[RMDB]
RNA sequence: GGGAACGACUCGAGUAGAGUCGAAAAUAACUGUAAUCAGUGUAUUGUUAGCAUUUCAUCUGAAACAACAUUAUGACCAAAUUACAAAUGAGAACCAUGCUAAUAAAGACAAAAUUAAUAUUAAAAACGCUGUGAGAAUAUUCGUAUUCUCACAGCGAAAAGAAACAACAACAACAAC
Reactivity to 2A3 in 0.01 (KOAc 150mM, MgCl2 10mM, bicine 150mM(pH8.5), 24C), signal-to-noise 2, nucleotides 027 to 126: u200a000a010c070u090g060u270a110a000u240c030a000g110u030g060u040a030u030u030g000u030u000a000g000c060a070u040u080u000c010a090u030c060u140g100a050a100a000c090a000a040c030a090u120u160a120u300g070a000c070c000a010a140a000u160u160a030c060a120a080a040u160g000a060g000a150a000c150c120a030u000g000c000u000a050a010u090a210a090a050g030a030c010a000a100a020a150u010u150a100a240u270a210u160u220a170a060a000a000a150